[RMDB]
RNA sequence: GGGAACGACUCGAGUAGAGUCGAAAACACCAAAGAGUCCCGAGGUGAAGGUUUUUGUCACAUUCUCGAGUUCAAGCACUUCCCUCACCCCCGAGGAGGUGGCAGGCUGCGUAAUGCUCUUUGGAGAAGAUCAUACACUAUUCGUAGUGUAUGAUCUAAAAGAAACAACAACAACAAC
Reactivity to 2A3 in 0.01 (KOAc 150mM, MgCl2 10mM, bicine 150mM(pH8.5), 24C), signal-to-noise 6, nucleotides 027 to 126: c040a010c010c000a000a020a000g010a000g020u050c040c020c040g020a050g000g060u140g070a050a070g070g040u040u080u080u300u180g060u050c010a010c010a050u090u030c040u020c040g070a060g030u110u110c070a110a020g050c030a050c070u050u050c030c030c000u030c070a160c010c000c010c010c010g010a020g000g010a010g020g000u020g030g010c020a010g040g000c010u050g000c030g050u050a050a050u110g000c000u010c000u010u010u010g030g010a030g050a020
Reactivity to DMS in 0.01 (KOAc 150mM, MgCl2 10mM, bicine 150mM(pH8.5), 24C), signal-to-noise 9, nucleotides 027 to 126: c120a190c010c010a020a030a020g000a040g010u000c050c030c010g010a100g010g010u000g010a070a120g010g010u000u000u000u000u000g010u000c020a040c030a060u000u000c050u000c020g000a060g010u010u010c130a090a130g010c080a060c080u000u000c030c010c020u030c090a300c050c040c010c020c030g010a060g000g000a030g000g020u000g000g020c030a090g010g000c020u000g010c060g020u000a050a060u010g000c010u000c010u000u000u000g010g010a190g010a120
This 177-nucleotide RNA was probed chemically with 2A3 and DMS. Source: RMDB library OK2TST, as collected in RNAgym.